[RMDB]
RNA sequence: GGGAACGACUCGAGUAGAGUCGAAAAUCUGUGCUCGUUAGCCAACGCGAGGUGCGCCAUGAAACCCAAAAAUUCACCAAGCGCAGCCUGAUCUCGUCUGUGGGUGCGGCGUGCUCCUUAAGGUAACGGUCACUGAAUUGUUCGCAAUUCAGUGACCAAAAGAAACAACAACAACAAC
Reactivity to DMS in 0.01 (KOAc 150mM, MgCl2 10mM, bicine 150mM(pH8.5), 24C), signal-to-noise 1, nucleotides 027 to 126: u050c010u010g000u000g000c070u000c020g020u010u040a160g040c010c070a050a060c240g010c070g000a050g010g060u000g000c000g000c010c030a150u020g020a050a070a100c000c110c160a040a130a030a070a020u020u020c040a090c080c060a070a100g020c150g000c040a050g000c040c060u000g000a100u000c030u000c050g000u010c100u010g030u000g040g000g000u010g000c180g000g000c000g010u000g010c020u010c040c000u000u000a060a100g000g000u000a060a130c200
Structure probing data (DMS) for a 177-nucleotide construct.
For DMS, 783 sequencing reads were counted.
The RNA was probed in 150 mM KOAc, 10 mM MgCl2 and 150 mM bicine (pH 8.5) at 24 C.
High DMS reactivity at an A or C suggests that its Watson-Crick edge is free.
Values cover nucleotides 27 to 126.